[RMDB]
RNA sequence: GGGAACGACUCGAGUAGAGUCGAAAAGCGUACUACGUUUCGUUGAUCAAGGGUAUGAAGCACCGAAGGCCCAGACAGCCACGCAUGUGUAUCCCAAAUAGGAUACAUGGCGUGGUCGAGUCGGCGGUGCUUCAUACCCUUGGGAGAAACGUAUCGCGCACAUAAAAAUGUUCGCAUUUUUAUGUGCAAAAGAAACAACAACAACAAC
Reactivity to DMS in 0.01 (KOAc 150mM, MgCl2 10mM, bicine 150mM(pH8.5), 24C), signal-to-noise 2, nucleotides 027 to 156: g040c040g010u000a090c090u000a010c010g020u010u000u000c010g060u000u000g000a060u010c010a020a020g010g020g020u000a010u010g010a040a030g020c000a020c000c020g020a070a050g000g000c010c020c000a210g030a090c110a180g010c000c000a020c000g030c000a110u010g060u010g020u000a000u000c020c000c010a080a110a240u010a060g000g010a020u000a010c010a010u000g000g010c000g040u000g010g010u000c090g000a040g030u000c000g010g020c020g000g020u000g000c000u020u010c000a010u000a000c000c000c000u000u000g000g000g010a030g000a000a020a010c000g010u000a000u000c020g030c060
Chemical mapping of a 207-nucleotide RNA with DMS. For DMS, 8,907 sequencing reads were counted. Conditions: 150 mM KOAc, 10 mM MgCl2 and 150 mM bicine (pH 8.5), 24 C. The data come from the RNA Mapping Database (RMDB), library RNAMAK. Values cover nucleotides 27 to 156.